[RMDB]
RNA sequence: GGGAACGACUCGAGUAGAGUCGAAAAACGAGUCCCUACGCGGACUCGAAGGGCCCCAGAAGACCAAGGGGCCCAAACCUACCACUCAUUAGAUGCAUGGAAAUCACUAGGUGAUACGUCACCUAGAACACGCUUUUAAGCUUCGGCUUAAAAGCAAGAUGUAGAUCUACUUCGGUAGAUCUACAUCAAAAGAAACAACAACAACAAC
Reactivity to DMS in 0.01 (KOAc 150mM, MgCl2 10mM, bicine 150mM(pH8.5), 24C), signal-to-noise 1, nucleotides 027 to 156: a040c000g000a030g000u000c000c000c000u000a160c300g030c120g000g060a050c030u010c000g030a030a000g040g030g050c020c000c000c000a120g060a050a090g020a210c020c010a120a200g000g000g050g060c110c020c020a010a000a030c020c030u000a150c050c010a060c060u010c050a140u000u000a070g000a130u000g000c040a080u030g000g000a050a050a160u010c010a200c010u070a000g020g000u010g020a040u000a080c220g000u000c000a010c000c000u000a000g000a030a120c150a080c050g030c000u020u000u010u000a000a010g000c030u000u010c300g040g080c000u000u000a000a000a020a010g000c000a040a000
Reactivity to 2A3 in 0.01 (KOAc 150mM, MgCl2 10mM, bicine 150mM(pH8.5), 24C), signal-to-noise 4, nucleotides 027 to 156: a010c000g000a000g000u000c020c010c010u080a100c130g080c140g020g020a000c000u000c000g000a030a010g000g000g000c000c000c000c030a070g070a290a030g060a150c050c050a090a100g010g000g010g000c000c000c000a010a000a000c010c010u040a020c000c020a020c020u140c030a060u050u220a060g040a090u100g080c100a040u110g090g080a050a060a100u110c050a030c100u010a000g000g020u000g020a000u030a050c230g030u000c020a000c000c000u000a010g000a000a010c040a010c050g010c000u030u010u010u000a000a000g000c020u000u110c170g060g020c000u010u000a010a000a000a000g000c000a000a010

Annotation: This 207-nucleotide RNA was probed chemically with DMS and 2A3. Conditions: 150 mM KOAc, 10 mM MgCl2 and 150 mM bicine (pH 8.5), 24 C. The DMS profile rests on 1,515 reads.